[RMDB]
RNA sequence: GGGAACGACUCGAGUAGAGUCGAAAACCGGAUCUUUGACACGUAAAGUGAAGUUACUAUUUAGGGCUUCAUUUUAUUUCAAAGAAUUUGCUACCCGCACUUUCACUGCUACCACUGCUGUAGGUAGAAACUGACGAGUUCGCUCGUCAGAAAAGAAACAACAACAACAAC
Reactivity to DMS in 0.01 (KOAc 150mM, MgCl2 10mM, bicine 150mM(pH8.5), 24C), signal-to-noise 6, nucleotides 027 to 129: c050c000g030g040a100u020c000u040u010u030g020a060c300a120c300g030u000a030a030a020g020u020g030a020a020g030u060u040a210c030u030a150u080u120u140a070g000g000g000c000u000u000c000a040u000u000u000u000a020u020u040u010c000a020a030a020g020a000a070u000u080u040g030c050u020a020c050c020c000g000c020a000c060u040u000u030c000a020c030u030g020c040u050a100c000c000a100c070u060g050c160u000g040u060a030g020g010u010a030g070a040a060a100
Reactivity to 2A3 in 0.01 (KOAc 150mM, MgCl2 10mM, bicine 150mM(pH8.5), 24C), signal-to-noise 9, nucleotides 027 to 129: c000c000g030g080a060u010c010u000u010u000g030a050c060a010c210g020u010a000a000a000g000u000g000a000a000g010u040u090a300c040u120a170u210u300u300a060g020g000g000c000u000u000c000a000u000u000u000u020a010u000u080u000c000a000a000a000g040a020a040u120u090u110g010c010u030a040c000c010c010g030c010a020c000u030u070u040c020a020c040u090g020c010u020a030c000c010a060c070u140g080c050u110g110u080a070g030g010u010a010g010a080a040a010

This 170-nucleotide RNA was probed chemically with DMS and 2A3. The data come from the RNA Mapping Database (RMDB), library 15KLIB. The reactions ran in a buffer of 150 mM KOAc, 10 mM MgCl2 and 150 mM bicine (pH 8.5), at 24 C.